[RMDB]
RNA sequence: GGGAACGACUCGAGUAGAGUCGAAAACUGUGGAUGGGAAAGCAUGCGACCAUCCUUCGAUGGCAUACGUGCGUACCCAUCCGAAACGUACGACAGGAUGGGAAAGCAUGCAGGCCGUCGACUAGACGUACGGAAACCAUCCGAUUGUGCGCGCGGAAGAAUUGUAGGGAUUCGUCCCUACAAUUCUAAAAGAAACAACAACAACAAC
Reactivity to 2A3 in 0.01 (KOAc 150mM, MgCl2 10mM, bicine 150mM(pH8.5), 24C), signal-to-noise 4, nucleotides 027 to 156: c060u060g070u140g110g010a010u000g000g020g020a080a090a070g030c050a020u090g010c040g040a080c000c020a010u020c000c010u050u010c040g010a010u010g000g000c050a060u050a140c050g010u000g010c000g020u060a040c000c000c000a000u000c000c000g020a000a000a000c010g090u200a040c030g060a040c060a070g000g000a010u000g000g000g000a300a170a040g010c010a020u010g000c010a030g030g030c000c000g030u010c010g000a000c000u050a060g040a130c030g090u150a030c010g050g050a100a010a030c060c020a060u020c010c000g060a090u070u130g030u030g050c010g000c030g010c010g050g010a100
Reactivity to DMS in 0.01 (KOAc 150mM, MgCl2 10mM, bicine 150mM(pH8.5), 24C), signal-to-noise 2, nucleotides 027 to 156: c050u000g020u020g030g050a020u000g000g010g010a100a130a280g000c030a040u010g020c040g000a150c010c000a040u000c030c050u020u010c030g010a070u000g030g000c040a060u000a070c010g030u000g010c000g020u010a230c000c010c010a010u020c000c020g030a000a090a130c070g000u000a070c090g010a090c140a170g020g020a010u010g000g000g000a080a210a300g000c040a020u010g010c000a110g030g020c010c000g000u000c020g020a090c060u000a050g000a160c030g000u010a100c040g020g020a200a050a190c050c040a040u000c010c010g010a120u000u000g030u000g020c070g000c010g030c020g000g090a140
About this RNA: This 207-nucleotide RNA was probed chemically with 2A3 and DMS. Values cover nucleotides 27 to 156. For DMS the reverse transcriptase was MarathonRT. It was measured as part of the RMDB library OK3TST. Conditions: 150 mM KOAc, 10 mM MgCl2 and 150 mM bicine (pH 8.5), 24 C. For 2A3 the reverse transcriptase was SuperScript II with manganese. For DMS, 4,154 sequencing reads were counted.